[RMDB]
RNA sequence: GGGAACGACUCGAGUAGAGUCGAAAAUGUCGUAUGGCAGCGCCCAGCCAGCGCAAAGCGGUUCUGUCAACCCUUGUUGGCAGGUACGGCCGCCGUACCAAAUUGUACGAGGCCGCACACGCAGAUGGUACACCAUAUGAUUCGUCAUAUGGUGUACAAAAGAAACAACAACAACAAC
Reactivity to DMS in 0.01 (KOAc 150mM, MgCl2 10mM, bicine 150mM(pH8.5), 24C), signal-to-noise 9, nucleotides 027 to 126: u010g020u010c030g010u010a070u000g010g010c010a070g010c120g010c020c000c010a130g000c030c030a200g000c020g010c120a080a110a110g010c010g000g010u010u010c010u000g010u000c010a010a010c000c300c190u010u010g020u000u000g010g010c000a020g010g010u000a010c010g000g010c010c000g010c160c020g020u000a010c000c210a090a100a170u010u010g010u000a010c000g010a300g000g010c000c000g020c010a010c020a090c020g020c020a080g000a270u010g010
Reactivity to 2A3 in 0.01 (KOAc 150mM, MgCl2 10mM, bicine 150mM(pH8.5), 24C), signal-to-noise 7, nucleotides 027 to 126: u130g040u070c030g040u120a240u260g020g000c030a030g020c030g050c040c010c000a010g000c010c010a020g010c040g000c040a070a070a040g010c010g040g000u120u080c000u010g010u010c000a010a020c070c070c150u090u300g010u000u000g010g000c000a010g020g020u010a010c010g010g000c010c020g070c150c000g000u010a000c000c040a150a160a300u200u210g000u000a000c000g000a010g000g000c000c010g000c000a030c000a000c030g000c010a030g030a200u190g110